[RMDB]
RNA sequence: GGGAACGACUCGAGUAGAGUCGAAAAAACAAACAUCAAAUCGCAUAGCAAAGAGUCAAAAAGAUAGAGAGCUUUGCGAGACCUACCAAGGGUGAAGAGAUACCAUCCAAGGAGCUGAAGAGAAAUCGAGAGCUCACGGCGUUCGCGCCGUGAGCAAGAUUUUUCACUUGUUCGCAAGUGAAAAAUCAAAAGAAACAACAACAACAAC
Reactivity to 2A3 in 0.01 (KOAc 150mM, MgCl2 10mM, bicine 150mM(pH8.5), 24C), signal-to-noise 1, nucleotides 027 to 156: a030a000c090a050a090a000c020a100u100c050a060a100a000u050c000g000c000a000u030a030g000c050a200a130a070g110a030g030u080c050a040a110a130a160a050g090a050u150a040g130a010g040a000g040c000u000u030u020g010c000g000a010g030a000c020c010u010a050c100c030a080a050g010g000g020u010g020a090a030g080a010g000a020u080a110c010c000a000u030c050c030a000a040g010g030a020g000c050u080g040a030a040g010a010g000a070a050a020u170c050g010a030g000a030g170c010u010c030a000c000g000g000c020g040u090u090c150g010c000g000c030c000g000u030g000a000g000c000a000a020
Structure probing data (2A3) for a 207-nucleotide construct. The reactions ran in a buffer of 150 mM KOAc, 10 mM MgCl2 and 150 mM bicine (pH 8.5), at 24 C. It was measured as part of the RMDB library M2RFPK.